[RMDB]
RNA sequence: GGGAACGACUCGAGUAGAGUCGAAAACUGGAUGCUGCCGAAUGGCUGCGGCACAGGAAAAGCAUCGUCUUCCUGAUGAUAGGGGAAGGCCAGCAGCGCGGCUUCGUGGAAAGCGAAGUGAAGCGUAGGCCUAUACUCAGUUCGCUGAGUAUAGGCCAAAAGAAACAACAACAACAAC
Reactivity to DMS in 0.01 (KOAc 150mM, MgCl2 10mM, bicine 150mM(pH8.5), 24C), signal-to-noise 2, nucleotides 027 to 126: c060u010g000g000a100u000g010c040u000g000c030c020g000a160a080u010g010g010c080u020g020c030g000g000c020a110c090a100g000g000a030a050a090a080g010c010a030u010c100g060u000c020u000u010c020c030u000g010a100u010g020a120u000a140g030g020g000g030a070a050g000g020c050c140a100g000c100a150g010c000g000c000g010g010c020u000u000c010g040u000g010g010a090a100a210g010c020g000a000a000g010u000g000a060a140g020c010g010u020a100
Reactivity to 2A3 in 0.01 (KOAc 150mM, MgCl2 10mM, bicine 150mM(pH8.5), 24C), signal-to-noise 2, nucleotides 027 to 126: c020u030g040g000a040u040g020c020u030g040c030c010g100a210a180u270g080g040c060u060g010c000g050g020c030a000c030a050g100g000a050a100a020a030g000c010a010u040c030g020u020c000u040u000c000c020u080g050a150u140g020a020u100a160g050g000g010g010a010a010g000g020c020c000a060g000c030a030g000c000g030c000g010g000c000u000u000c000g000u060g040g190a300a120a030g000c000g000a000a000g020u020g100a120a030g030c030g000u030a030